[RMDB]
Chemical mapping of a 207-nucleotide RNA with 2A3 and DMS. For 2A3, 1,186 sequencing reads were counted. Values cover nucleotides 27 to 156.
RNA sequence: GGGAACGACUCGAGUAGAGUCGAAAAUGUAUGGUUGGAUGGACAAAGAUGCUACCGAUGCUGAUACAUGUAUGAGUAUAAUUGCAGUCAGUCCAUACUGGUACAUUCUUUUAAUCCCAAUAUUUACGUUGAGUCUAUUAAUCGUGACCCAGUCUCACAUACCCAGGAUCUUCGGAUCCUGGGUAUGAAAAGAAACAACAACAACAAC
Reactivity to 2A3 in 0.01 (KOAc 150mM, MgCl2 10mM, bicine 150mM(pH8.5), 24C), signal-to-noise 3, nucleotides 027 to 156: u050g000u000a020u040g030g100u110u070g030g000a010u010g080g000a020c040a070a170a030g060a030u010g000c020u030a060c000c090g040a030u040g000c040u040g020a050u060a090c110a150u160g020u120a030u100g100a000g070u030a030u060a110a150u120u110g020c030a010g120u040c000a010g040u030c030c020a030u070a060c020u070g050g000u030a030c000a010u050u050c020u030u170u000u130a080a110u010c000c000c000a010a040u220a140u050u160u060a060c110g020u050u030g070a050g020u030c030u030a150u110u090a240a110u120c070g020u070g050a040c040c020c040a030g060u020c080u030c010a050
Reactivity to DMS in 0.01 (KOAc 150mM, MgCl2 10mM, bicine 150mM(pH8.5), 24C), signal-to-noise 2, nucleotides 027 to 156: u010g020u000a090u000g000g020u020u000g010g010a050u000g020g030a090c040a050a200a300g030a070u010g000c040u010a060c020c020g000a160u020g030c000u000g070a220u020a080c100a060u010g020u010a170u010g000a100g000u000a030u000a040a070u000u010g000c040a300g030u010c000a040g020u010c050c030a080u000a030c010u010g030g000u000a010c000a010u000u000c020u000u000u020u000a010a240u010c030c000c020a100a060u010a070u000u040u000a050c120g000u000u000g000a140g000u000c030u000a090u020u000a050a100u000c040g030u010g020a300c020c000c000a160g010u000c070u030c060a250
DMS adducts were read by reverse transcription with MarathonRT. 2A3 adducts were read by reverse transcription with SuperScript II with manganese.